Chemical mapping of a 177-nucleotide RNA with DMS and 2A3.
In probing experiments dimethyl sulfate is read out at A N1 and C N3, which are open when not base-paired.
RNA sequence: GGGAACGACUCGAGUAGAGUCGAAAAAUGGCUGGUGAGGCGUGGUUCCGGCUGGAAUGACGCCGUGCUUUGUGCGGAAAGCUGGCGGUGUGCCAUGAAGGGGGAGGAUCUGCACGAGAUUGCCGAAGUAAAUAAAUGAGUUCGCUCAUUUAUUUACAAAAGAAACAACAACAACAAC
Reactivity to DMS in 0.01 (KOAc 150mM, MgCl2 10mM, bicine 150mM(pH8.5), 24C), signal-to-noise 9, nucleotides 027 to 126: a080u010g000g010c020u000g010g020u000g000a110g010g010c020g030u000g010g020u000u000c020c010g020g030c230u010g020g010a040a020u000g000a040c020g010c000c000g010u010g010c020u000u000u010g020u000g010c030g010g000a050a070a130g010c050u000g010g010c020g010g010u010g010u010g010c020c030a060u010g020a110a160g010g000g000g010g010a100g000g000a130u000c020u000g010c030a050c050g000a080g000a120u000u000g010c020c020g010a100a140
Reactivity to 2A3 in 0.01 (KOAc 150mM, MgCl2 10mM, bicine 150mM(pH8.5), 24C), signal-to-noise 8, nucleotides 027 to 126: a010u110g030g000c020u030g010g060u080g060a070g020g000c030g020u020g040g010u040u020c020c020g100g120c240u270g030g030a060a030u050g050a040c000g010c010c000g000u010g000c010u060u070u130g020u050g030c020g030g030a060a040a030g060c030u050g030g000c020g060g110u170g070u160g050c020c020a080u170g080a050a090g040g000g000g000g010a020g030g010a030u000c010u030g000c010a010c030g020a030g010a050u090u130g010c010c010g010a080a000
The reactions ran in a buffer of 150 mM KOAc, 10 mM MgCl2 and 150 mM bicine (pH 8.5), at 24 C.